[RMDB]
Conditions: 150 mM KOAc, 10 mM MgCl2 and 150 mM bicine (pH 8.5), 24 C.
The record gives the reactivity of an RNA of 177 nucleotides to 2A3 and DMS.
It was measured as part of the RMDB library OK2TST.
DMS adducts were read by reverse transcription with MarathonRT.
RNA sequence: GGGAACGACUCGAGUAGAGUCGAAAAAGAAGAUGUUUGCAACACAAUUUGAGGUUAGGUAUUGUGGUGUGUCUGGCUUAGGAGAUGGAUAAUUACAGAGGAUUUAUUUCACAACUGUUCCAAAUCAAUUACGAUUGUUCUUCGGAACAAUCGUAAUAAAAGAAACAACAACAACAAC
Reactivity to 2A3 in 0.01 (KOAc 150mM, MgCl2 10mM, bicine 150mM(pH8.5), 24C), signal-to-noise 2, nucleotides 027 to 126: a000g090a020a010g040a050u060g010u070u100u200g040c040a050a000c000a030c020a100a100u050u060u200g090a080g050g020u060u050a030g000g060u010a090u080u050g050u020g000g050u040g000u000g000u000c010u030g020g000c030u020u010a040g020g040a050g030a070u050g010g050a060u070a130a030u170u090a020c030a070g040a030g050g050a020u000u120u000a140u060u150u110c100a050c010a190a080c040u020g020u110u040c020c040a000a040a080u210c040a030
Reactivity to DMS in 0.01 (KOAc 150mM, MgCl2 10mM, bicine 150mM(pH8.5), 24C), signal-to-noise 3, nucleotides 027 to 126: a080g020a080a090g010a050u000g000u000u010u020g020c080a080a060c080a070c100a060a060u000u020u010g010a100g000g010u000u000a040g010g020u000a020u010u010g000u010g000g020u010g000u010g010u010c050u000g010g000c050u010u000a080g000g000a030g000a120u000g010g010a070u010a040a070u000u000a070c060a030g000a120g000g010a050u000u020u010a100u020u000u000c040a050c110a070a080c090u000g020u000u010c030c010a050a090a140u000c130a060